[RMDB]
RNA sequence: GGGAACGACUCGAGUAGAGUCGAAAAGAAAGGCAGCCAGUGCAGCCCACGAAGCCAAUCGAUGCAUGCUUUUGCAUGCCGCCCACGACUGAGGGCAGCUGCGGCACUGAGGGCAGCUGCCGAAAGAAAAUAUACCACUGUUCGCAGUGGUAUAUUUAAAAGAAACAACAACAACAAC
Reactivity to DMS in 0.01 (KOAc 150mM, MgCl2 10mM, bicine 150mM(pH8.5), 24C), signal-to-noise 9, nucleotides 027 to 126: g010a060a090a220g010g010c010a040g020c020c020a060g010u010g010c040a130g010c060c060c060a140c130g000a120a090g010c020c050a060a220u000c060g000a130u010g010c020a010u000g000c010u000u000u010u010g010c000a010u000g010c000c170g000c010c000c010a100c140g010a090c130u010g010a130g010g000g000c010a030g000c020u000g010c060g020g000c040a050c060u010g000a110g010g010g010c040a050g000c000u000g000c000c000g000a020a060a110g000a120
Reactivity to 2A3 in 0.01 (KOAc 150mM, MgCl2 10mM, bicine 150mM(pH8.5), 24C), signal-to-noise 6, nucleotides 027 to 126: g050a020a060a010g000g000c010a010g030c020c020a020g020u040g050c030a030g090c020c050c020a040c060g060a090a010g010c000c010a020a030u050c040g040a020u140g000c020a000u010g010c010u110u200u270u300g010c010a000u030g000c010c010g030c000c010c000a050c040g200a060c090u140g100a150g060g040g000c020a010g010c020u020g020c000g040g000c030a020c080u100g050a210g040g050g020c010a010g000c010u000g000c000c010g000a010a010a000g040a000
Conditions: 150 mM KOAc, 10 mM MgCl2 and 150 mM bicine (pH 8.5), 24 C. This 177-nucleotide RNA was probed chemically with DMS and 2A3. The data come from the RNA Mapping Database (RMDB), library OK2TRN. 2A3 adducts were read by reverse transcription with SuperScript II with manganese. For DMS the reverse transcriptase was MarathonRT.